[RMDB]
RNA sequence: GGGAACGACUCGAGUAGAGUCGAAAAUGUCGAAGCAAUGGCGGAGUCCUAGGCAUCACAUCUUCGGGCGAUGCUGAAUCAAAUGGCGGGGCUAGGCAUCGCACCUCUAUCCGGUGUCAAAGCAAUGGAUAGAGGAUAAGUUCGCUUAUCCUCUAUCAAAAGAAACAACAACAACAAC
Reactivity to DMS in 0.01 (KOAc 150mM, MgCl2 10mM, bicine 150mM(pH8.5), 24C), signal-to-noise 9, nucleotides 027 to 126: u010g010u000c060g020a070a070g020c050a080a090u000g010g020c040g010g010a120g010u010c020c020u010a170g010g010c010a040u000c030a050c050a070u000c060u000u000c090g010g010g020c020g010a030u000g000c010u000g000a100a120u010c140a040a070a080u000g010g010c040g010g000g010g000c040u000a180g010g000c020a020u000c020g000c040a120c090c010u000c050u000a050u010c050c040g000g010u010g010u000c040a040a070a140g010c110a070a100u010g010
Reactivity to 2A3 in 0.01 (KOAc 150mM, MgCl2 10mM, bicine 150mM(pH8.5), 24C), signal-to-noise 6, nucleotides 027 to 126: u100g010u040c070g020a040a000g010c050a050a110u140g050g000c090g150g110a040g060u120c020c010u050a060g120g000c010a020u040c010a010c010a040u040c040u090u080c030g020g040g010c010g000a010u010g000c020u020g010a010a050u080c060a040a050a160u140g080g000c050g000g030g020g000c010u020a030g010g000c010a010u010c010g020c020a100c010c010u010c010u030a060u050c020c010g050g000u110g020u040c010a050a080a020g060c040a050a050u100g130